Chemical mapping of a 207-nucleotide RNA with 2A3 and DMS. For DMS, 7,131 sequencing reads were counted. For 2A3, 6,286 sequencing reads were counted. The reactions ran in a buffer of 150 mM KOAc, 10 mM MgCl2 and 150 mM bicine (pH 8.5), at 24 C. DMS (dimethyl sulfate) methylates the pairing face of unpaired adenines and cytosines. For 2A3 the reverse transcriptase was SuperScript II with manganese. Reactivities are given for positions 27 through 156.

[RMDB]
RNA sequence: GGGAACGACUCGAGUAGAGUCGAAAAAGUACACGUUCGCGUGUACUAAAAAACCUUUGUGCUAGUAUGUAAUGUAAGACAGCGUCUCCCAUUGGGAUACGCAAUGACGCAUUACUAAGCUAGCACUCUGGUAAAAAGAAGCUGUUCGCAGCUUCAAUAAGAUUUCAUGUUUCGACAUGAAAUCUUAAAAAGAAACAACAACAACAAC
Reactivity to 2A3 in 0.01 (KOAc 150mM, MgCl2 10mM, bicine 150mM(pH8.5), 24C), signal-to-noise 6, nucleotides 027 to 156: a000g000u010a000c010a010c010g030u050u110c290g020c010g110u010g000u000a000c010u010a010a020a000a000a000a010c010c000u020u000u000g000u000g000c000u010a010g000u030a030u200g010u000a020a000u010g010u040a160a100g090a090c040a090g210c000g020u000c020u020c050c010c050a230u190u300g000g000g000a000u010a020c010g000c040a050a080u080g010a010c050g000c020a000u000u000a010c010u020a110a120g020c010u000a010g000c000a000c000u000c000u000g000g010u110a100a110a020a000a010g010a000a000g000c000u010g040u130u210c300g010c110a000g000c000u000u000c000a000a010
Reactivity to DMS in 0.01 (KOAc 150mM, MgCl2 10mM, bicine 150mM(pH8.5), 24C), signal-to-noise 3, nucleotides 027 to 156: a060g000u000a000c000a020c010g030u000u010c270g060c030g060u000g000u010a010c000u000a000a050a090a090a060a020c010c010u000u000u000g040u000g020c000u000a020g010u000a300u010g010u000a010a010u000g010u000a090a180g010a210c060a100g000c000g000u000c060u000c000c000c030a300u000u000g070g010g020a010u000a000c010g030c000a030a020u010g000a150c160g000c000a010u000u010a000c010u000a080a190g000c030u000a000g010c000a000c000u000c010u000g020g010u010a040a070a060a100a130g020a090a120g020c000u000g010u000u010c160g060c040a140g020c010u000u000c010a060a200